[RMDB]
Source information:
This 177-nucleotide RNA was probed chemically with 2A3. Source: RMDB library TTRDES, as collected in RNAgym. The 2A3 profile rests on 3,833 reads.

RNA sequence: GGGAACGACUCGAGUAGAGUCGAAAAGAUAUGGAUCUGUGUACUUUUGACGUUAGUCGCUCGGAAACGAGCGAUAGUAACGAUAAGUACUCAGAUCCUAAGUCAAAGUCAAUCUUCGGAUUGACAAGGAUAGAAAGUACUUCGGUACUUUCUAUCCAAAAGAAACAACAACAACAAC
Reactivity to 2A3 in 0.01 (KOAc 150mM, MgCl2 10mM, bicine 150mM(pH8.5), 24C), signal-to-noise 1, nucleotides 027 to 126: g010a000u000a050u190g000g000a000u020c000u000g000u010g000u010a000c030u000u240u300u300g300a200c140g000u010u050a030g040u040c000g030c000u010c020g030g000a060a110a130c000g000a000g020c000g000a000u000a000g000u010a000a020c010g040a080u070a300a000g000u000a000c000u000c000a000g000a000u020c000c000u000a000a020g020u000c060a250a150a020g020u000c000a010a020u010c010u080u100c300g180g000a000u000u000g010a000c020a020a040